[RMDB]
RNA sequence: GGGAACGACUCGAGUAGAGUCGAAAAGAUAUGGAUUUGUGCUUGCCAGGACUAUUCGGAAACGAACGAAUCCUGGAACUACAAGAAACAAAUCCUAAGUCAAAAUCAUCUACUUCGGUAGAUGAAAUCUGAUUUAGGAGUUCGCUCCUAAAUCAGAAAAAGAAACAACAACAACAAC
Reactivity to DMS in 0.01 (KOAc 150mM, MgCl2 10mM, bicine 150mM(pH8.5), 24C), signal-to-noise 1, nucleotides 027 to 126: g000a030u000a300u000g010g000a000u000u000u000g010u000g000c010u000u000g000c000c010a020g000g010a020c020u010a300u000u010c000g000g000a080a080a160c020g000a020a040c060g030a070a060u000c010c000u000g000g000a030a020c050u040a260c020a000a000g000a030a100a010c000a000a010a010u000c000c000u000a020a070g010u010c050a060a050a090a090u000c000a020u000c000u000a010c010u000u010c150g010g010u000a000g000a000u000g010a010a040a030
Reactivity to 2A3 in 0.01 (KOAc 150mM, MgCl2 10mM, bicine 150mM(pH8.5), 24C), signal-to-noise 2, nucleotides 027 to 126: g030a030u070a040u190g000g000a000u000u020u020g040u030g090c010u020u010g000c000c020a020g000g000a040c050u100a110u050u030c000g000g090a110a080a100c030g070a050a010c060g050a090a210u010c010c010u000g000g020a000a000c020u150a020c010a020a010g030a130a300a010c010a000a000a010u040c020c010u020a170a020g050u020c000a000a050a080a200u050c010a010u000c000u010a020c010u050u070c300g120g000u000a000g000a000u000g000a030a020a000
Description: This 177-nucleotide RNA was probed chemically with DMS and 2A3. Source: RMDB library TTRDEL, as collected in RNAgym. The DMS profile rests on 1,258 reads. 2A3 adducts were read by reverse transcription with SuperScript II with manganese.